[RMDB]
RNA sequence: GGGAACGACUCGAGUAGAGUCGAAAACGCCAAGACGGCUCCGGCCACGCGCAACGUAGUCGCUGACGCACCAAAGAAAAAUCCGGCAGAUCACAUCGGCCAGCGCUCAUUGCCAUCGCCUGCUGACGUUGCGGUCGCAAUUCGUUGCGACCGCAACAAAAGAAACAACAACAACAAC
Reactivity to 2A3 in 0.01 (KOAc 150mM, MgCl2 10mM, bicine 150mM(pH8.5), 24C), signal-to-noise 1, nucleotides 027 to 126: c060g020c030c030a050a010g140a030c070g000g000c030u000c030c000g080g000c000c010a140c110g000c020g010c040a070a000c000g170u160a070g070u060c060g000c030u080g020a030c000g070c000a060c000c130a060a100a000g240a010a010a000a000a000u030c000c000g040g000c030a010g000a010u040c020a010c000a060u060c010g090g020c020c000a000g010c000g000c030u000c100a100u000u190g070c020c000a080u070c020g040c030c000u020g000c000u050g000a070c090